[RMDB]
RNA sequence: GGGAACGACUCGAGUAGAGUCGAAAACUCUUGUUAGGUGAAAGUUGAUGGUCGCCGUGUCAGUCCAUGUCUUUGAAAACAGUUCUAUGUAGUAGGGAGUCGAGAACCUAUGAGAGUUAGAACUUGCUAUGCCUUGGACUCUUCGGAGUCCAAGGAACUGGAAUCAAAGUUUCGACUUUGAUUCCAGAAAAGAAACAACAACAACAAC
Reactivity to 2A3 in 0.01 (KOAc 150mM, MgCl2 10mM, bicine 150mM(pH8.5), 24C), signal-to-noise 2, nucleotides 027 to 156: c010u040c040u030u040g060u080u060a090g040g060u090g060a130a060a080g050u060u060g060a070u080g020g020u040c040g000c050c050g030u040g040u020c040a010g030u030c020c020a060u100g030u030c040u060u090u100g060a080a040a000a010c040a000g000u020u000c010u020a050u100g030u010a040g010u010a000g030g030g020a050g050u090c050g040a020g040a220a040c000c000u010a010u020g050a100g010a010g060u040u020a000g000a020a010c020u030u030g020c020u060a020u120g040c000c000u010u000g020g000a010c000u000c010u040u030c110g100g000a000g000u010c000c000a000a000g000g000a000a010
Reactivity to DMS in 0.01 (KOAc 150mM, MgCl2 10mM, bicine 150mM(pH8.5), 24C), signal-to-noise 3, nucleotides 027 to 156: c030u000c020u010u000g010u000u000a060g010g040u000g010a070a060a100g000u000u000g000a100u000g020g010u000c010g030c030c020g030u010g010u010c020a090g050u000c040c040a100u000g010u000c010u000u010u020g000a080a080a060a060c030a040g010u000u000c030u000a040u010g010u000a280g010u000a060g010g010g010a130g000u010c120g010a260g010a100a110c010c010u000a010u000g000a240g030a180g030u000u000a030g010a040a070c020u000u000g020c020u000a080u010g010c000c000u000u000g000g000a020c000u010c000u000u000c250g060g010a020g020u000c000c000a000a000g000g000a000a020